[RMDB]
RNA sequence: GGGAACGACUCGAGUAGAGUCGAAAAUUUUGAGCUUUCGAGCUCAAAACAACUCGUGUCCCGACCAGGAAAAACAGAUUUACACGAAGUGAAAGAUCGAAAGGGCCACCAUGUUCGCAUGGUGGAACUGCCUGAAAUGGUUCGCCAUUUCAGGCAGAAAAGAAACAACAACAACAAC
Reactivity to 2A3 in 0.01 (KOAc 150mM, MgCl2 10mM, bicine 150mM(pH8.5), 24C), signal-to-noise 1, nucleotides 027 to 126: u050u000u020u010g000a010g000c040u060u020u180c250g090a030g000c000u000c020a000a020a000a000c020a020a030c020u020c120g060u030g000u070c000c040c000g010a070c010c080a100g010g080a050a090a050a080a020c040a070g030a060u110u040u110a040c090a000c050g130a250a040g010u030g100a180a070a050g080a030u030c050g040a090a030a000g020g050g000c000c000a010c010c000a000u000g020u040u050c150g000c150a000u010g000g000u010g000g000a000a000
Reactivity to DMS in 0.01 (KOAc 150mM, MgCl2 10mM, bicine 150mM(pH8.5), 24C), signal-to-noise 2, nucleotides 027 to 126: u000u000u000u000g000a010g020c000u000u000u000c250g000a030g040c000u000c010a000a030a000a020c100a120a150c140u010c090g020u000g000u010c020c000c010g000a180c160c150a100g010g000a000a020a050a090a070c090a070g020a070u000u000u010a170c040a070c040g000a130a090g000u010g000a050a140a110g010a030u010c030g000a050a150a080g030g020g000c020c000a010c000c000a000u000g010u010u020c110g030c000a000u010g020g020u000g000g000a020a010
Chemical mapping of a 177-nucleotide RNA with 2A3 and DMS. DMS adducts were read by reverse transcription with MarathonRT. The RNA was probed in 150 mM KOAc, 10 mM MgCl2 and 150 mM bicine (pH 8.5) at 24 C.